[RMDB]
The record gives the reactivity of an RNA of 207 nucleotides to 2A3 and DMS. It was measured as part of the RMDB library ARCHII.
RNA sequence: GGGAACGACUCGAGUAGAGUCGAAAACGUGUGGACGCUUCGGCUUGGAGAUCGAAACACUAAAUUGAAUCAAGCUAGUUUAUUCUUCGCGUGUCUGUCCGCAGGGGGUAAAUGAAAUUAAAGACUAGACUAAACGUGUAGUGCUGAAGGUAGAGUAUCUAGUGAAAAUCUUCGGAUUUUCACUAGAAAAAGAAACAACAACAACAAC
Reactivity to 2A3 in 0.01 (KOAc 150mM, MgCl2 10mM, bicine 150mM(pH8.5), 24C), signal-to-noise 3, nucleotides 027 to 156: c030g020u010g000u000g020g030a030c010g020c030u040u020c020g050g000c010u010u040g020g000a020g020a060u080c000g020a040a050a000c020a000c100u160a040a110a200u170u240g020a000a010u020c000a000a000g000c000u020a020g020u010u040u030a030u080u000c010u080u150c050g000c000g040u030g010u000c010u030g000u000c010c020g000c050a060g000g010g000g010g020u040a030a020a020u050g020a010a000a010u130u140a070a070a020g060a020c040u070a030g010a020c020u080a070a120a080c040g000u050g030u110a060g030u040g040c060u050g050a050a060g060g010u090a010g010a000g060u040a060
Reactivity to DMS in 0.01 (KOAc 150mM, MgCl2 10mM, bicine 150mM(pH8.5), 24C), signal-to-noise 1, nucleotides 027 to 156: c040g040u000g030u000g030g020a160c100g020c040u010u000c030g030g040c000u000u010g010g010a100g000a070u000c000g000a280a090a050c030a040c030u000a060a050a160u000u030g000a060a090u000c030a050a050g030c020u000a070g020u000u000u000a020u020u010c020u000u010c070g030c000g010u010g020u000c050u000g020u000c070c030g020c050a070g040g000g020g010g000u000a010a020a080u010g010a160a060a190u000u000a050a060a010g000a090c020u000a040g030a090c030u000a040a060a110c110g010u020g000u000a060g030u000g000c000u000g000a090a060g030g000u000a130g000a130g010u000a110
For DMS the reverse transcriptase was MarathonRT.